Structure probing data (DMS and 2A3) for a 207-nucleotide construct. For DMS, 4,041 sequencing reads were counted. It was measured as part of the RMDB library RNAMAK. Conditions: 150 mM KOAc, 10 mM MgCl2 and 150 mM bicine (pH 8.5), 24 C.
[RMDB]
RNA sequence: GGGAACGACUCGAGUAGAGUCGAAAAGCAAGUGACUUCGGUCACUUGCAAAAAACCUUUGUGCGUCCGAGGCAACAGCGUCUUAGGCCCAUUGGGCCUUUGACGACAUGCCUCAGGACGCACUCUGGUAAAAAACCACAGUCUUCGGACUGUGGAAACACUAUCAAAAGUUCGCUUUUGAUAGUGUAAAAGAAACAACAACAACAAC
Reactivity to DMS in 0.01 (KOAc 150mM, MgCl2 10mM, bicine 150mM(pH8.5), 24C), signal-to-noise 2, nucleotides 027 to 156: g030c010a010a000g040u010g010a020c000u000u000c300g060g020u000c000a020c000u020u020g040c000a000a020a060a080a090a020c020c000u010u000u010g020u000g010c000g010u000c010c010g010a020g010g040c010a030a070c110a190g000c000g000u000c010u000u000a010g060g020c000c000c030a300u010u000g080g050g050c000c000u000u000u000g000a020c030g020a080c070a300u000g000c000c000u000c010a040g030g010a020c010g020c010a000c000u010c010u000g000g020u010a000a020a030a090a090a110c010c000a010c010a020g000u000c010u000u010c300g020g010a050c000u000g040u000g000g000a020a050
Reactivity to 2A3 in 0.01 (KOAc 150mM, MgCl2 10mM, bicine 150mM(pH8.5), 24C), signal-to-noise 3, nucleotides 027 to 156: g010c000a010a000g000u000g000a000c010u060u230c300g040g000u030c000a000c000u030u020g000c010a000a010a000a010a000a010c010c020u010u000u010g000u000g000c000g000u020c000c000g000a010g020g000c010a060a050c060a180g070c000g000u010c010u000u010a010g010g020c010c010c080a300u230u300g000g010g020c000c030u000u000u000g010a000c000g010a040c010a020u040g000c020c000u000c000a000g000g010a010c000g000c000a000c000u000c000u000g000g000u000a060a090a000a010a030a020c000c000a000c010a000g000u000c000u030u230c290g150g000a000c000u000g000u000g000g020a020a010